[RMDB]
RNA sequence: GGGAACGACUCGAGUAGAGUCGAAAAGAUAUGGAAAGUCGCAAGGAGUGGCUAUUCGGAAACGAAUAGAAUCUCUGAUGACCGAGCUUUCCUAAGUCAAACUAUGCCUAGUUCGCUAGGCAUAGAACAUUACUGCUUAGUUCGCUAAGCAGUAAUGAAAAGAAACAACAACAACAAC
Reactivity to 2A3 in 0.01 (KOAc 150mM, MgCl2 10mM, bicine 150mM(pH8.5), 24C), signal-to-noise 7, nucleotides 027 to 126: g010a010u060a010u120g010g020a030a000a000g030u050c020g000c110a140a300g020g000a030g030u120g080g130c020u010a000u010u000c000g010g020a050a070a050c010g000a000a010u010a010g030a050a080u040c010u000c010u030g120a300u170g020a040c090c020g040a050g210c010u010u000u010c000c000u010a150a030g040u040c040a020a050a110c030u000a000u010g010c000c000u010a010g010u040u060c160g020c180u000a000g000g000c000a000u000a000g000a000a000
Reactivity to DMS in 0.01 (KOAc 150mM, MgCl2 10mM, bicine 150mM(pH8.5), 24C), signal-to-noise 9, nucleotides 027 to 126: g000a050u000a300u010g000g000a000a010a010g010u000c020g010c040a100a230g000g010a020g010u000g010g020c010u000a010u000u000c000g000g000a100a090a170c000g010a010a010u000a010g000a080a070u000c000u000c000u000g010a110u010g010a150c300c020g000a070g010c000u000u000u000c000c000u000a040a100g010u000c040a120a090a250c010u000a000u000g000c000c000u000a000g010u000u010c250g020c000u000a000g000g000c010a000u000a000g000a080a160
An RNA of 177 nucleotides, treated with 2A3 and DMS and read out base by base.
The reactions ran in a buffer of 150 mM KOAc, 10 mM MgCl2 and 150 mM bicine (pH 8.5), at 24 C.
For DMS, 17,707 sequencing reads were counted.
For 2A3, 19,918 sequencing reads were counted.
Reactivities are given for positions 27 through 126.
The data come from the RNA Mapping Database (RMDB), library TTRDEL.
For DMS the reverse transcriptase was MarathonRT.